An RNA of 177 nucleotides, treated with DMS and 2A3 and read out base by base. High 2A3 reactivity points to a flexible backbone, as in loops and unpaired stretches. The data come from the RNA Mapping Database (RMDB), library OK1LIB. Conditions: 150 mM KOAc, 10 mM MgCl2 and 150 mM bicine (pH 8.5), 24 C. For 2A3 the reverse transcriptase was SuperScript II with manganese.

RNA sequence: GGGAACGACUCGAGUAGAGUCGAAAAAGGCUUGUGGGAAGUACUUCCAAGUGUUCACUUUAGGCCCACAGGCUCUUCAGUCAGCUUCUGGUUAAUGCUGCCAGGCUUGGAACUCUCCCUUCAGGGCCGUAUCCUAUCCUUUCGAGGAUAGGAUACGAAAAGAAACAACAACAACAAC
Reactivity to DMS in 0.01 (KOAc 150mM, MgCl2 10mM, bicine 150mM(pH8.5), 24C), signal-to-noise 4, nucleotides 027 to 126: a050g000g000c010u000u000g020u010g020g010g000a100a040g010u030a100c130u010u020c050c040a030a040g010u010g020u020u020c130a050c040u000u010u030a080g020g000c020c000c080a070c070a050g010g000c010u010c020u000u030c100a040g010u020c070a050g010c020u040u010c020u010g010g000u000u000a090a080u040g010c100u010g020c020c010a060g010g020c010u000u020g010g000a040a080c070u000c040u010c000c000c000u000u000c090a070g000g000g000c120
Reactivity to 2A3 in 0.01 (KOAc 150mM, MgCl2 10mM, bicine 150mM(pH8.5), 24C), signal-to-noise 8, nucleotides 027 to 126: a000g010g000c010u010u010g000u010g010g010g030a050a080g080u100a110c040u120u060c060c030a040a020g030u050g100u220u200c090a030c040u050u070u120a100g050g040c010c000c000a020c010a020g010g000c050u020c020u110u070c020a060g050u040c020a020g010c010u120u070c010u130g020g030u090u140a180a120u250g080c100u050g020c010c010a010g010g000c000u040u080g050g000a040a040c020u010c000u010c030c010c000u060u120c080a070g020g030g040c040